This 177-nucleotide RNA was probed chemically with 2A3. The RNA was probed in 150 mM KOAc, 10 mM MgCl2 and 150 mM bicine (pH 8.5) at 24 C. For 2A3 the reverse transcriptase was SuperScript II with manganese. Values cover nucleotides 27 to 126.
RNA sequence: GGGAACGACUCGAGUAGAGUCGAAAACGAACCGUGCAUUCUUGUUGAGCAAGUCCUCGAUCACCGGAGUGGCAAGAUCGUAGUCCUGUCUGCUUUUGGGCCGCAAAACAUACGGUGCACCACCGACGCGGGAACAUCUCUUCGGAGAUGUUCCCGCAAAAGAAACAACAACAACAAC
Reactivity to 2A3 in 0.01 (KOAc 150mM, MgCl2 10mM, bicine 150mM(pH8.5), 24C), signal-to-noise 2, nucleotides 027 to 126: c020g020a010a020c010c050g050u040g000c000a040u080u050c000u080u060g030u050u070g020a040g060c050a040a110g000u000c000c000u080c020g090a010u030c010a040c020c040g160g000a180g070u040g000g000c010a060a020g030a030u070c090g030u050a050g050u000c000c020u050g070u120c100u050g000c060u070u130u140u080g000g000g050c020c010g000c030a060a090a020a130c030a000u280a010c060g010g000u000g080c000a000c000c000a000c000c080g090a150c140